[RMDB]
RNA sequence: GGGAACGACUCGAGUAGAGUCGAAAAGAUAUGGAAGUUGCGAGAAUUAAGGUCGAAGAACUCUUAAGAUUUCGGAAACGAAAUCUUAAGAGGGAGACCGAUAUUCGAUGAGCAACUUCCUAAGUCACAUAGCGUGAGAGUUCGCUCUCACGCUAUGAAAAGAAACAACAACAACAAC
Reactivity to DMS in 0.01 (KOAc 150mM, MgCl2 10mM, bicine 150mM(pH8.5), 24C), signal-to-noise 1, nucleotides 027 to 126: g030a060u010a300u000g000g010a020a000g030u000u000g020c030g050a230g020a030a000u000u010a160a300g010g000u000c010g020a130a120g000a140a200c000u000c000u000u010a000a010g000a030u010u000u010c000g000g000a160a090a190c010g030a000a010a000u000c000u000u000a000a000g000a040g000g030g000a060g010a030c000c000g020a140u000a030u000u000c000g000a180u000g030a300g010c000a000a000c000u000u000c000c000u030a000a080g010u000c040a250
The record gives the reactivity of an RNA of 177 nucleotides to DMS. The RNA was probed in 150 mM KOAc, 10 mM MgCl2 and 150 mM bicine (pH 8.5) at 24 C. Reactivities are given for positions 27 through 126.